RNA sequence: GGGAACGACUCGAGUAGAGUCGAAAAUCAUUUGCCAAAGAAGGAAGCUAAGUCCUAAUUGUCUUGCUCAGAAUGAUGGAGUGCAUGGAUGAUUCAGAGGGGCACUGCCCAGAUAUCUUCUCCUGCUCUCCUACUGGAGUGCCCUUCUUGGAUUCCACUAGUGGUUAGCGUUCGCGCUAACCACUAGAAAAGAAACAACAACAACAAC
Reactivity to 2A3 in 0.01 (KOAc 150mM, MgCl2 10mM, bicine 150mM(pH8.5), 24C), signal-to-noise 2, nucleotides 027 to 156: u100c040a030u010u060u270g030c010c010a020a060a140g040a000a010g040g000a060a010g000c030u100a080a050g070u100c010c050u100a130a130u120u070g020u020c030u020u070g000c040u030c020a050g070a210a120u150g040a150u050g030g030a020g000u040g000c000a000u070g000g000a040u120g030a000u160u090c060a010g010a060g040g030g000g020c070a250c150u210g000c050c000c000a030g030a040u100a100u050c110u140u050c030u040c010c000u000g050c010u000c000u020c080c010u010a030c000u020g020g020a050g020u050g010c040c000c000u020u000c010u000u000g000g020a030u060u040c020c000a000
An RNA of 207 nucleotides, treated with 2A3 and read out base by base. For 2A3, 641 sequencing reads were counted. The RNA was probed in 150 mM KOAc, 10 mM MgCl2 and 150 mM bicine (pH 8.5) at 24 C. The data come from the RNA Mapping Database (RMDB), library OK3TST.